[RMDB]
RNA sequence: GGGAACGACUCGAGUAGAGUCGAAAAAUGAUGUCGAUGGCAAUAAAUUUAUUGAUUACCUUCAAGCAUACGGUCCAAUUAUUGCGGGGCAUGCACAUCCUCAUAUUACUAAAGCAAUUCAAGAACAUCUAGAUUGGUGAUUCGUCACCAAUCUAGAAAAAGAAACAACAACAACAAC
Reactivity to DMS in 0.01 (KOAc 150mM, MgCl2 10mM, bicine 150mM(pH8.5), 24C), signal-to-noise 2, nucleotides 027 to 126: a060u020g010a080u000g020u000c080g010a120u010g000g000c030a060a030u000a070a100a130u020u010u020a150u040u010g010a110u000u000a060c060c010u010u010c080a070a120g010c100a040u010a120c110g000g020u000c070c040a050a090u020u000a040u000u000g010c040g010g010g010g040c040a010u020g000c050a090c040a070u000c000c010u000c080a030u000a060u000u000a070c110u010a060a100a070g020c090a050a120u020u000c130a070a130g010a060a070c190a110
Reactivity to 2A3 in 0.01 (KOAc 150mM, MgCl2 10mM, bicine 150mM(pH8.5), 24C), signal-to-noise 2, nucleotides 027 to 126: a000u040g040a020u030g020u070c020g070a120u050g120g030c050a040a050u090a140a100a120u220u300u190a140u100u080g010a020u080u100a060c000c000u030u040c060a050a080g000c000a030u040a130c040g060g020u000c010c000a030a040u100u040a060u030u060g020c030g030g000g000g000c020a030u050g040c070a090c020a110u070c050c010u040c020a030u070a020u230u110a070c080u120a100a050a020g090c020a080a050u110u210c030a070a010g150a090a030c010a050

Structure probing data (DMS and 2A3) for a 177-nucleotide construct. High 2A3 reactivity points to a flexible backbone, as in loops and unpaired stretches. The reactions ran in a buffer of 150 mM KOAc, 10 mM MgCl2 and 150 mM bicine (pH 8.5), at 24 C. The DMS profile rests on 1,495 reads. It was measured as part of the RMDB library OK2TRN.